[RMDB]
RNA sequence: GGGAACGACUCGAGUAGAGUCGAAAAGAUAUGGAUGAGGUGCCAGACCCACAUCGGAAACGAUGUGAAGGUCGGUAAUACCUCUGUCCUAAGUCAAAAGGUUCCGGACGUUCGCGUCCGGAACCAACUUCUAUCAAACGUUCGCGUUUGAUAGAAGAAAAGAAACAACAACAACAAC
Reactivity to 2A3 in 0.01 (KOAc 150mM, MgCl2 10mM, bicine 150mM(pH8.5), 24C), signal-to-noise 1, nucleotides 027 to 126: g030a020u040a030u060g000g010a010u020g000a000g010g040u030g090c090c050a060g050a020c010c010c000a000c010a010u000c000g000g060a010a020a020c000g000a000u000g010u020g070a100a100g000g000u000c000g000g080u030a040a020u020a010c010c000u000c060u010g030u030c000c000u000a060a010g020u010c030a010a030a020a280g000g010u000u000c010c000g000g000a010c030g000u110u160c300g040c020g150u000c000c000g000g020a010a000c010c000a000a000
Reactivity to DMS in 0.01 (KOAc 150mM, MgCl2 10mM, bicine 150mM(pH8.5), 24C), signal-to-noise 2, nucleotides 027 to 126: g010a030u000a200u000g000g010a040u000g010a010g040g010u010g020c020c020a090g000a000c010c000c030a000c000a000u010c000g000g000a060a040a130c000g020a010u000g010u010g000a100a080g020g020u000c000g010g010u000a040a220u010a070c000c000u000c000u010g020u010c010c000u010a030a180g010u000c030a050a100a110a150g000g010u000u000c000c000g000g000a010c000g030u000u010c270g010c030g000u000c000c010g000g010a000a000c010c000a010a070